Overview: The record gives the reactivity of an RNA of 177 nucleotides to DMS. The reactions ran in a buffer of 150 mM KOAc, 10 mM MgCl2 and 150 mM bicine (pH 8.5), at 24 C. Reactivities are rounded to 0.1 and cut off at 0 and 3. DMS adducts were read by reverse transcription with MarathonRT. It was measured as part of the RMDB library TTRINS.
RNA sequence: GGGAACGACUCGAGUAGAGUCGAAAAGAUAUGGACGGUGCCAGAAGGUCGCUGCUCGAACUACUAGCGUACUCGGAAACGAGUAAACGCUAGCGAGCAGCGACCUUCGGUAAUUCCGUCCUAAGUCCACGACAUAUCGGUUCGCCGAUAUGUCGUGAAAAGAAACAACAACAACAAC
Reactivity to DMS in 0.01 (KOAc 150mM, MgCl2 10mM, bicine 150mM(pH8.5), 24C), signal-to-noise 2, nucleotides 027 to 126: g010a110u000a300u010g010g010a010c000g010g020u000g010c010c000a180g030a000a010g000g020u000c000g030c000u000g010c000u000c000g000a060a080c090u030a300c020u000a000g030c010g020u000a040c000u000c010g000g020a130a130a230c010g000a030g000u010a030a070a080c010g030c000u010a000g040c010g000a010g000c000a020g020c000g000a000c000c010u000u000c010g000g000u000a030a170u010u010c010c000g000u000c000c000u000a030a080g000u000c010